[RMDB]
RNA sequence: GGGAACGACUCGAGUAGAGUCGAAAAUGUGCCAGAACCCCAGUAAAUAGUGACCAAUACAUUCAGGCAUACUGUAUUCUCUCUGAGACAGCUUUUGGGCAGUGUUUAAAGCCAAGUUGGGGAAGACAACUAUCGCGUGUUUCGACACGCGAUAGUUAAAAGAAACAACAACAACAAC
Reactivity to DMS in 0.01 (KOAc 150mM, MgCl2 10mM, bicine 150mM(pH8.5), 24C), signal-to-noise 2, nucleotides 027 to 126: u020g000u000g000c050c040a100g010a070a130c030c050c000c040a220g030u000a050a070a110u000a030g030u000g010a090c080c040a080a060u010a090c110a110u000u000c040a070g020g020c040a040u010a040c070u000g000u010a170u010u000c020u010c020u000c110u010g000a210g010a050c130a050g000c010u000u000u000u010g000g000g000c040a080g000u010g020u000u000u000a090a070a140g000c050c010a010a060g010u000u000g000g020g020g000a120a060g050a110c160
This 177-nucleotide RNA was probed chemically with DMS. Source: RMDB library OK2TRN, as collected in RNAgym. Values are in units of 0.01, from 0 to 300, in steps of 10.